[RMDB]
RNA sequence: GGGAACGACUCGAGUAGAGUCGAAAAGCGUGAAAUCAGGAACUCUAUUUGGCGGGAGAGGUCUGCGAAUCGCACCUACGUUAUCGUCAACGAUUUGCAUCUUAUAGAGGCGAGAUUUAUACCUGCAGAGUUUGUAAACGUUCGCGUUUACAAACUCAAAAGAAACAACAACAACAAC
Reactivity to DMS in 0.01 (KOAc 150mM, MgCl2 10mM, bicine 150mM(pH8.5), 24C), signal-to-noise 2, nucleotides 027 to 126: g000c060g000u010g000a040a200a040u000c020a080g060g000a070a180c120u000c020u000a030u000u000u000g000g030c080g010g050g000a060g000a050g000g020u040c210u010g000c020g000a170a070u000c030g000c060a080c050c050u010a080c070g020u010u040a000u050c040g010u040c180a010a070c030g000a050u000u000u000g000c000a030u040c050u010u020a090u010a050g050a040g000g000c000g010a090g000a070u060u000u000a140u000a180c060c000u000g000c060a050
Reactivity to 2A3 in 0.01 (KOAc 150mM, MgCl2 10mM, bicine 150mM(pH8.5), 24C), signal-to-noise 4, nucleotides 027 to 126: g070c050g010u160g070a050a010a110u060c020a050g120g020a060a010c000u010c000u000a100u060u060u070g010g000c000g030g050g000a040g010a000g050g060u070c070u020g010c000g060a060a040u080c080g010c040a080c020c020u090a090c020g100u120u120a120u300c020g030u040c080a030a020c030g000a020u020u030u130g020c040a070u040c040u080u110a060u030a060g030a010g030g010c010g020a050g010a040u000u110u070a060u070a020c020c000u010g000c030a030